Structure probing data (2A3 and DMS) for a 177-nucleotide construct.
[RMDB]
RNA sequence: GGGAACGACUCGAGUAGAGUCGAAAAGAUAUGGAUCCUGGAGGUAGCUUGGAUUUAUAGGCUAAGCUGCUACAUCGGAAACGAUGUAGCAGUAUGCCUAUUGUCAGCUGCGAAGGGAUCCUAAGUCCAUGAAUAAACGGUUCGCCGUUUAUUCAUGAAAAGAAACAACAACAACAAC
Reactivity to 2A3 in 0.01 (KOAc 150mM, MgCl2 10mM, bicine 150mM(pH8.5), 24C), signal-to-noise 5, nucleotides 027 to 126: g060a040u130a040u260g000g000a000u020c010c010u050g020g060a140g300g050u050a010g010c050u130u300g180g000a030u210u300u130a020u060a000g000g000c010u070a160a260g030c000u010g000c000u010a000c000a000u000c020g010g070a100a090a060c010g020a010u000g000u000a000g000c000a000g000u000a000u020g010c000c010u000a000u000u000g000u000c000a000g000c000u000g020c020g020a010a020g000g010g000a000u000c000c010u010a070a010g000u000c030
Reactivity to DMS in 0.01 (KOAc 150mM, MgCl2 10mM, bicine 150mM(pH8.5), 24C), signal-to-noise 5, nucleotides 027 to 126: g010a100u000a300u020g000g000a020u000c000c010u000g010g010a300g000g000u010a010g020c010u010u010g060g020a030u000u010u010a000u010a010g010g000c000u010a130a270g000c000u000g010c010u000a010c010a000u000c000g010g000a150a140a250c020g010a010u000g000u000a000g010c000a010g010u010a090u000g000c000c010u000a000u000u000g000u000c000a040g010c000u010g000c020g010a300a270g010g000g000a010u000c000c010u000a010a120g000u000c060